[RMDB]
RNA sequence: GGGAACGACUCGAGUAGAGUCGAAAAGCAAAAGAUUAUCCAGGUGUAGCGGUGAAAUUCGUAGAGAUCUGGUGGUUAAUGAACCGGUGGCGAAGGCGAAAGAUAACCGCUGAAAAGAAGAAUUGAAUCUGUUAUGUGACUUCGGUCACAUAACAGAAAAAGAAACAACAACAACAAC
Reactivity to DMS in 0.01 (KOAc 150mM, MgCl2 10mM, bicine 150mM(pH8.5), 24C), signal-to-noise 1, nucleotides 027 to 126: g000c090a090a070a070a060g010a070u000u000a070u000c060c000a100g050g030u020g000u010a030g020c040g010g030u000g010a090a130a070u010u000c000g030u000a070g000a140g010a100u000c010u000g010g010u000g000g010u000u010a080a140u010g000a120a070c000c020g010g010u000g030g010c220g000a180a190g000g000c000g000a020a010a050g010a160u000a120a050c000c010g000c040u000g000a080a070a070a050g010a050a030g010a020a060u010u000g000a140a110